[RMDB]
RNA sequence: GGGAACGACUCGAGUAGAGUCGAAAAUCAUUAUAGGUCAUGAUAUAGUAAGCAGGAAGUAUUGGAAUAUGUGGAGAGAAAACUGUGAAAACUGCUUUUUCUGUUUAUAGUUGGUUUAUAGAGGAAGACAUGGGGUGAAGUUCGCUUCACCCCAUGUAAAAGAAACAACAACAACAAC
Reactivity to 2A3 in 0.01 (KOAc 150mM, MgCl2 10mM, bicine 150mM(pH8.5), 24C), signal-to-noise 2, nucleotides 027 to 126: u040c020a000u020u180a030u050a150g040g000u000c010a000u060g100a010u030a030u050a110g080u050a050a000g010c010a000g050g040a040a010g020u040a070u030u130g090g050a090a020u050a040u160g090u060g070g080a010g010a000g020a030a090a000a110c080u030g020u020g090a050a010a000a030c010u020g000c000u070u070u010u000u010c000u010g030u000u050u000a080u070a040g070u000u030g010g000u000u020u000a060u040a010g070a000g090g020a060a000g090
Reactivity to DMS in 0.01 (KOAc 150mM, MgCl2 10mM, bicine 150mM(pH8.5), 24C), signal-to-noise 2, nucleotides 027 to 126: u040c070a070u010u000a080u000a030g000g000u010c040a010u000g000a100u040a070u010a090g020u000a030a060g000c040a000g010g000a040a060g000u000a080u020u000g000g000a120a100u020a030u030g020u020g040g000a160g020a100g000a090a040a070a060c090u010g010u000g030a090a070a120a060c060u010g000c020u000u000u000u000u020c030u000g010u000u020u000a050u000a140g010u000u000g000g020u000u000u000a050u020a060g020a130g010g000a090a060g030